About this RNA: Chemical mapping of a 177-nucleotide RNA with 2A3 and DMS. For 2A3 the reverse transcriptase was SuperScript II with manganese. The RNA was probed in 150 mM KOAc, 10 mM MgCl2 and 150 mM bicine (pH 8.5) at 24 C.

[RMDB]
RNA sequence: GGGAACGACUCGAGUAGAGUCGAAAAACAGUAUGUUCAAUAGCAUUUUUCUCUUAAUUAUGUCCACCCUAGUAGUUUGUAGUACGUGCUCAACAACAUGCGAAAAUACUCCAUGGUAACACAUUUGUAUAUCUGCCGUUUUCGAACGGCAGAUAUAAAAAGAAACAACAACAACAAC
Reactivity to 2A3 in 0.01 (KOAc 150mM, MgCl2 10mM, bicine 150mM(pH8.5), 24C), signal-to-noise 1, nucleotides 027 to 126: a000c000a010g040u110a050u050g070u110u070c020a050a080u020a190g050c020a040u030u050u000u000u000c030u000c000u130u140a190a060u100u270a080u230g030u040c020c010a040c010c020c020u030a020g000u000a000g000u040u140u130g050u010a010g030u030a020c070g000u080g000c000u040c020a000a010c010a020a000c000a050u050g000c060g170a060a050a050a050u060a070c020u040c060c000a070u140g140g000u140a170a010c030a010c010a130u050u060u300g100
Reactivity to DMS in 0.01 (KOAc 150mM, MgCl2 10mM, bicine 150mM(pH8.5), 24C), signal-to-noise 2, nucleotides 027 to 126: a040c060a130g040u000a000u000g000u000u000c080a080a130u000a060g020c010a030u000u000u000u000u000c040u000c020u020u000a060a090u000u010a080u010g020u000c050c020a080c050c020c010u010a090g020u000a050g000u000u000u010g020u000a070g020u010a030c200g050u000g000c040u010c050a060a080c130a030a080c000a010u000g000c070g000a080a050a110a060u000a060c060u000c020c010a050u000g020g010u020a090a070c130a060c120a080u000u000u000g000
As a SHAPE reagent, 2A3 marks flexible, mostly unpaired nucleotides at the ribose 2'-OH.